[RMDB]
RNA sequence: GGGAACGACUCGAGUAGAGUCGAAAAUGAUGUCUCUGGUGUUUGUAAAUAUAAGGGUAAGUUUGUCCAAAUCCCUGCUCAGUGUGUCCGUGACCCUGUGGGAUUUUGUUUGUCAAAUACCCCCUGUGCGCCAGUCUGUUCGCAGACUGGAAAAGAAACAACAACAACAAC
Reactivity to 2A3 in 0.01 (KOAc 150mM, MgCl2 10mM, bicine 150mM(pH8.5), 24C), signal-to-noise 6, nucleotides 027 to 129: u170g060a020u090g080u030c030u010c020u090g100g010u010g050u030u120u060g110u050a050a090a050u160a060u060a110a060g010g000g000u010a030a040g020u020u010u030g020u000c000c020a000a000a000u000c000c000c000u000g050c070u040c030a020g040u030g050u070g020u170c060c110g130u150g020a010c000c000c010u020g000u060g020g010g000a020u030u060u020u070g090u080u140u090g030u010c010a010a000a010u030a030c010c000c000c000c000u010g030u090g080c020g050
Reactivity to DMS in 0.01 (KOAc 150mM, MgCl2 10mM, bicine 150mM(pH8.5), 24C), signal-to-noise 6, nucleotides 027 to 129: u050g000a100u000g010u020c000u000c020u030g010g020u030g020u030u030u060g020u000a060a060a110u030a090u030a070a070g000g010g040u030a020a130g030u000u000u000g000u000c000c000a000a020a060u040c000c030c030u040g000c190u010c050a060g050u000g000u030g030u000c030c170g040u040g020a060c020c030c010u000g000u000g030g030g000a070u040u010u020u030g030u010u000u000g000u010c010a010a030a060u000a300c090c070c000c010c030u020g020u000g010c140g040